Source: RMDB library TTRINS, as collected in RNAgym. This 177-nucleotide RNA was probed chemically with DMS. Reactivities are given for positions 27 through 126.
RNA sequence: GGGAACGACUCGAGUAGAGUCGAAAAGAUAUGGACCGAUAGGAGCGCGUGUUGUAGACAUGCUCGAAGGGUCGGAAACGACCUCAAGAGCAACAGCUACACCACGCGCUCCUAUCGGUCCUAAGUCGAAAUGCUAUCUGUUCGCAGAUAGCAUUUCAAAAGAAACAACAACAACAAC
Reactivity to DMS in 0.01 (KOAc 150mM, MgCl2 10mM, bicine 150mM(pH8.5), 24C), signal-to-noise 2, nucleotides 027 to 126: g010a090u000a300u000g000g000a000c020c000g000a050u000a000g020g010a020g040c000g000c010g030u000g020u010u000g000u010a000g000a040c080a270u010g000c000u000c000g000a300a280g010g010g020u000c010g010g010a100a160a230c000g010a000c000c020u000c040a030a300g000a010g000c000a010a070c300a150g000c000u000a030c000a000c010c000a000c010g000c030g000c020u000c000c010u000a000u000c000g000g010u000c000c000u000a000a060g010u000c120